Structure probing data (DMS and 2A3) for a 177-nucleotide construct. The reactions ran in a buffer of 150 mM KOAc, 10 mM MgCl2 and 150 mM bicine (pH 8.5), at 24 C. Source: RMDB library OK2TRN, as collected in RNAgym. For 2A3 the reverse transcriptase was SuperScript II with manganese. 2A3 is a SHAPE reagent: it acylates the 2'-hydroxyl of flexible nucleotides of all four kinds.

RNA sequence: GGGAACGACUCGAGUAGAGUCGAAAAGAAUACUCAGACAAAGCCCAGACUUUGGAGAGCGCCACAUUGCGAUAUUCCUUAAAUCCCAAUGGGUGAAGAAAAAUGAGAAAAUCGGCGCAGUCAACGAACCUAAAUUAUGGUUCGCCAUAAUUUAGGUAAAAGAAACAACAACAACAAC
Reactivity to DMS in 0.01 (KOAc 150mM, MgCl2 10mM, bicine 150mM(pH8.5), 24C), signal-to-noise 9, nucleotides 027 to 126: g010a120a090u010a080c050u000c020a070g020a260c050a050a070a130g010c020c070c110a110g010a120c060u000u010u000g010g010a180g010a100g010c020g000c010c030a100c070a040u000u000g020c200g010a050u000a060u000u010c060c050u010u000a060a090a100u000c010c020c000a050a050u010g000g000g010u000g010a070a100g010a030a050a040a060a080u010g000a110g000a080a040a070a070u000c100g010g010c030g010c040a090g010u000c080a070a080c140g010a100
Reactivity to 2A3 in 0.01 (KOAc 150mM, MgCl2 10mM, bicine 150mM(pH8.5), 24C), signal-to-noise 5, nucleotides 027 to 126: g020a050a040u090a120c020u020c040a010g050a160c030a050a060a010g010c020c070c040a070g040a170c050u070u050u070g040g020a070g010a020g060c010g000c000c010a100c010a090u040u100g000c000g030a020u010a070u090u080c010c000u080u120a110a200a080u020c000c000c000a010a020u060g000g000g020u050g040a060a040g110a020a100a010a020a010u140g020a070g060a080a100a010a060u100c050g000g000c010g000c020a010g060u040c020a020a060c040g030a030